[RMDB]
RNA sequence: GGGAACGACUCGAGUAGAGUCGAAAAGCCUCGCGCAGUCCGCGCAACUCGCGCACGAGCUGCCACAUCGACGCGAGCAGCUUGCCGUACGGCAGCGUCGAUGUCGGCGAGCUGCGCGGCAGGCGCAACUGAGCGAGCCUUUCGAGGCUCGCUCAGUAAAAGAAACAACAACAACAAC
Reactivity to DMS in 0.01 (KOAc 150mM, MgCl2 10mM, bicine 150mM(pH8.5), 24C), signal-to-noise 2, nucleotides 027 to 126: g020c010c010u010c250g010c020g010c020a110g000u020c010c020g030c000g000c000a010a020c050u000c030g000c050g020c070a080c090g010a150g010c040u010g020c010c180a090c050a070u010c010g020a010c020g000c010g000a180g010c150a070g000c040u010u020g050c000c000g030u000a080c190g000g000c010a120g000c010g000u000c020g010a040u000g010u010c060g020g000c000g010a020g030c040u000g000c020g030c000g010g000c060a040g000g030c000g030c030a140
Reactivity to 2A3 in 0.01 (KOAc 150mM, MgCl2 10mM, bicine 150mM(pH8.5), 24C), signal-to-noise 2, nucleotides 027 to 126: g010c000c000u030c040g000c000g010c000a010g030u070c010c020g030c000g000c000a010a030c010u030c000g010c000g020c040a050c100g070a030g060c080u070g040c080c020a020c000a060u090c020g060a040c030g030c000g090a130g060c040a010g050c060u140u210g030c040c030g150u210a080c200g030g000c010a040g000c000g070u010c000g040a090u000g050u050c070g090g030c000g000a010g000c000u020g010c000g000c000g000g030c000a010g120g000c010g000c010a000
This 177-nucleotide RNA was probed chemically with DMS and 2A3. The RNA was probed in 150 mM KOAc, 10 mM MgCl2 and 150 mM bicine (pH 8.5) at 24 C.